[RMDB]
RNA sequence: GGGAACGACUCGAGUAGAGUCGAAAAUAUACAUCAGAAGUCGGCACAACUCCCGACUCGCGGUGAGCGAUGCAGCGUAGCCUUAGCUACGCAGCUGCUGUGCGGAUGGCUAGCAAAAGCUAGCCUACACUCGUAUAUACUUCGGUAUAUACGAGUGAAAAGAAACAACAACAACAAC
Reactivity to DMS in 0.01 (KOAc 150mM, MgCl2 10mM, bicine 150mM(pH8.5), 24C), signal-to-noise 9, nucleotides 027 to 126: u030a110u030a130c040a030u010c030a080g000a110a040g000u000c010g010g000c220a110c090a100a150c230u010c100c000c000g000a050c050u000c020g000c300g000g020u010g010a080g010c050g010a090u020g010c020a030g010c010g000u000a000g010c000c270u010u040a080g010c000u000a000c000g010c010a010g010c020u010g010c040u000g010u020g000c060g000g000a060u010g010g010c000u000a000g010c000a130a090a080a140g000c000u000a000g010c000c000u000a020
Reactivity to 2A3 in 0.01 (KOAc 150mM, MgCl2 10mM, bicine 150mM(pH8.5), 24C), signal-to-noise 9, nucleotides 027 to 126: u160a000u040a030c040a040u080c040a030g080a160a010g100u020c010g020g080c140a040c040a300a300c130u050c020c000c000g010a020c010u000c010g020c040g010g030u100g030a030g000c040g160a180u160g020c020a010g000c000g000u010a000g020c010c090u180u150a040g000c000u000a000c000g000c000a010g000c010u040g000c010u030g030u080g050c030g080g030a070u090g020g000c000u000a000g000c020a170a130a210a030g000c000u000a000g000c000c000u000a000